[RMDB]
The record gives the reactivity of an RNA of 177 nucleotides to 2A3 and DMS. It was measured as part of the RMDB library RFM100. For DMS the reverse transcriptase was MarathonRT.

RNA sequence: GGGAACGACUCGAGUAGAGUCGAAAAAGUCACCAGUGCACUACGGUGCACUGGUGACAGGGAGUGAUGAGGGUUAAAAGCGCCGACUCUGGGUAGCAUGGGGAAGGCCAGGACAGCUGACCAUAAACUAGUUGAGCUAUUUCGAUAGCUCAACUAGAAAAGAAACAACAACAACAAC
Reactivity to 2A3 in 0.01 (KOAc 150mM, MgCl2 10mM, bicine 150mM(pH8.5), 24C), signal-to-noise 3, nucleotides 027 to 126: a010g000u020c000a000c030c000a010g000u020g040c000a020c030u070a070c300g070g000u010g000c010a000c020u000g020g000u000g000a010c000a000g000g000g010a180g010u160g050a030u110g020a140g050g020g030u070u070a010a200a010a070g090c090g010c020c000g050a070c010u000c030u080g030g070g080u150a070g000c080a140u150g000g000g000g030a010a070g000g000c000c010a000g010g030a100c050a080g000c010u040g020a070c010c010a070u080a020a080a040
Reactivity to DMS in 0.01 (KOAc 150mM, MgCl2 10mM, bicine 150mM(pH8.5), 24C), signal-to-noise 1, nucleotides 027 to 126: a040g000u000c000a000c120c030a010g050u000g030c070a000c050u000a160c200g020g120u000g030c030a000c000u050g060g090u000g010a000c040a030g000g000g010a090g000u030g020a010u030g050a300g000g030g030u000u040a030a060a140a010g000c100g000c000c020g000a090c110u000c070u000g000g020g030u030a020g020c070a170u080g000g000g000g010a060a090g020g050c000c050a030g010g030a100c040a010g040c020u040g000a060c000c120a130u010a030a020a220